[RMDB]
RNA sequence: GGGAACGACUCGAGUAGAGUCGAAAAGACGUUUCGACGUCCAAGUUCCGUAGGCUCAAGUUAAGCUUGGAUUUAUGUAGCUACUACUUCGAAAGAGGUAGGUCAGCUACAUUGUCAGCUUAAUGAGCCUAAACGGGUAAGGUUGCUUCGGCAACAAUGAAGUGAGAUACUUCGGUAUCUCACUUCAAAAAGAAACAACAACAACAAC
Reactivity to 2A3 in 0.01 (KOAc 150mM, MgCl2 10mM, bicine 150mM(pH8.5), 24C), signal-to-noise 3, nucleotides 027 to 156: g030a000c020g020u070u130u140c290g090a050c000g000u000c010c010a140a070g130u150u020c000c000g010u020a020g030g000c000u000c060a170a190g110u040u010a010a010g020c020u160u200g190g000a090u240u300u030a020u040g000u000a000g000c000u000a000c000u000a010c010u020u020c010g090a110a100a080g000a020g010g000u010a020g020g100u080c020a000g010c000u000a000c000a000u000u000g000u010c000a010g000c000u000u000a010a020u050g000a000g000c000c000u000a010a000a000c010g030g000g040u130a160a080g110g020u010u010g000c010u090u140c220g100g000c030a010a010c000a010a030
Reactivity to DMS in 0.01 (KOAc 150mM, MgCl2 10mM, bicine 150mM(pH8.5), 24C), signal-to-noise 1, nucleotides 027 to 156: g010a010c000g020u010u000u000c210g020a100c000g020u000c020c020a130a040g000u000u000c020c050g030u000a040g020g010c000u000c010a080a160g040u010u010a010a050g000c000u000u020g030g000a040u000u010u000a010u010g030u000a000g000c000u010a040c010u000a010c000u010u000c000g020a140a150a240g000a040g010g010u000a000g000g000u030c080a030g020c000u000a000c000a000u000u000g020u000c010a080g000c010u000u000a030a060u000g000a010g050c000c010u000a010a010a040c010g030g080g010u000a100a140g000g020u010u000g000c000u000u000c070g030g010c040a040a070c070a110a150